[RMDB]
RNA sequence: GGGAACGACUCGAGUAGAGUCGAAAAGAUAUGGAUGAGCUACCCACCGCUCCGAAGAACUAGCUCGGAAACGAGCUAGGGAGGAGAUGAGGCUCAUCCUAAGUCAAAAGAACUGUUCGCAGUUCAACCAACAAAUUGAGUUCGCUCAAUUUGUUGGAAAAGAAACAACAACAACAAC
Reactivity to 2A3 in 0.01 (KOAc 150mM, MgCl2 10mM, bicine 150mM(pH8.5), 24C), signal-to-noise 2, nucleotides 027 to 126: g100a070u190a110u300g000g020a010u000g000a000g010c010u090a210c030c020c050a050c030c100g010c000u000c000c010g300a300a070g000a020a020c000u010a000g000c000u000c000g030g010a050a070a000c020g000a000g000c000u000a000g000g000g000a010g000g000a020g040a070u130g040a030g070g010c000u000c000a000u020c000c000u000a020a030g140u020c060a010a080a000a230g010a000a000c010u010g040u110u130c300g020c170a020g010u000u000c030a010a040
Reactivity to DMS in 0.01 (KOAc 150mM, MgCl2 10mM, bicine 150mM(pH8.5), 24C), signal-to-noise 3, nucleotides 027 to 126: g030a080u010a150u000g020g020a000u000g020a000g000c000u000a060c070c030c030a300c130c040g000c000u010c000c000g060a150a130g020a270a160c010u000a000g000c010u000c000g000g000a080a060a130c000g000a010g000c000u000a000g000g000g010a080g000g000a030g010a020u020g010a090g030g000c000u000c000a010u000c010c020u000a000a100g010u020c100a100a070a130a180g010a040a000c000u000g010u000u030c180g030c020a010g000u000u010c000a110a110
An RNA of 177 nucleotides, treated with 2A3 and DMS and read out base by base. For 2A3 the reverse transcriptase was SuperScript II with manganese. Reactivities are rounded to 0.1 and cut off at 0 and 3. For DMS, 2,096 sequencing reads were counted. Reactivities are given for positions 27 through 126. Conditions: 150 mM KOAc, 10 mM MgCl2 and 150 mM bicine (pH 8.5), 24 C. Source: RMDB library TTRDEL, as collected in RNAgym.